Notes: Chemical mapping of a 177-nucleotide RNA with DMS and 2A3. DMS adducts were read by reverse transcription with MarathonRT. The data come from the RNA Mapping Database (RMDB), library OK1LIB. The RNA was probed in 150 mM KOAc, 10 mM MgCl2 and 150 mM bicine (pH 8.5) at 24 C.
RNA sequence: GGGAACGACUCGAGUAGAGUCGAAAAGGAAAUAUGUGGGAGAAAUUUUAUCUCUUUUAUUGAAGGUCAGUGAUGACGGCUGCAGAAGAUCUCACCGGCGAGGCAAUGCAGGUCAUAGAGAUCAACGGCGACUAUUACGGUUCGCCGUAAUAGUCGCAAAAGAAACAACAACAACAAC
Reactivity to DMS in 0.01 (KOAc 150mM, MgCl2 10mM, bicine 150mM(pH8.5), 24C), signal-to-noise 2, nucleotides 027 to 126: g000g000a120a040a100u080a030u000g000u070g010g030g020a020g040a000a130a070u030u020u020u030a090u000c010u000c000u000u000u010u020a020u000u030g000a230a110g000g000u010c010a040g010u080g010a120u030g000a020c050g000g010c040u000g000c030a000g000a090a140g030a080u030c020u000c030a060c030c080g040g000c090g000a060g020g000c100a030a140u010g000c010a040g000g010u000c090a030u010a070g000a070g000a030u000c020a130a140c140g000
Reactivity to 2A3 in 0.01 (KOAc 150mM, MgCl2 10mM, bicine 150mM(pH8.5), 24C), signal-to-noise 2, nucleotides 027 to 126: g080g070a090a090a040u270a090u120g080u080g000g050g000a010g050a030a080a070u110u240u250u110a220u000c000u000c000u000u110u000u020a110u050u210g090a060a020g000g000u000c020a020g070u050g280a000u000g020a000c020g040g090c000u020g000c000a030g000a270a040g040a150u000c020u000c050a030c000c040g170g000c080g010a050g030g000c010a010a010u040g000c000a000g020g010u050c000a000u030a030g070a000g000a050u040c010a080a020c000g090